[RMDB]
About this RNA:
Chemical mapping of a 177-nucleotide RNA with DMS and 2A3. DMS adducts were read by reverse transcription with MarathonRT. It was measured as part of the RMDB library OK2TST. The DMS profile rests on 960 reads.
RNA sequence: GGGAACGACUCGAGUAGAGUCGAAAAGGUCUCAUUGAAGAGACUGGAGUCAAUUUUCAGUUUCAGAUUAACUAAUAGCAUUUCACUUCCUGGGAUGAUUUAUAACAGUGGUGACUUGGAAAUACUACCUUUCCGUACAUUUCGAUGUACGGAAAGGAAAAGAAACAACAACAACAAC
Reactivity to DMS in 0.01 (KOAc 150mM, MgCl2 10mM, bicine 150mM(pH8.5), 24C), signal-to-noise 2, nucleotides 027 to 126: g010g000u000c000u010c010a110u030u000g010a300a140g000a020g000a010c000u000g010g010a000g020u000c230a120a100u000u000u000u000c030a020g010u010u000u000c010a090g020a210u020u000a090a070c210u010a070a100u000a130g000c020a010u000u010u000c010a050c080u000u010c300c080u000g020g000g020a090u000g000a110u000u000u000a010u010a070a040c120a030g010u000g010g010u000g030a010c040u000u000g010g010a070a030a070u000a070c160u010a100
Reactivity to 2A3 in 0.01 (KOAc 150mM, MgCl2 10mM, bicine 150mM(pH8.5), 24C), signal-to-noise 2, nucleotides 027 to 126: g070g000u000c000u000c030a070u060u210g130a220a060g020a000g010a010c020u000g000g010a010g040u130c140a110a120u050u040u040u100c040a010g020u020u010u030c040a050g010a150u140u180a090a060c050u080a100a110u070a180g070c000a000u000u020u070c030a040c020u080u060c050c040u010g000g000g030a020u020g030a040u060u200u240a130u010a050a050c010a010g010u010g020g020u020g000a000c040u000u040g100g040a050a020a020u120a080c020u000a030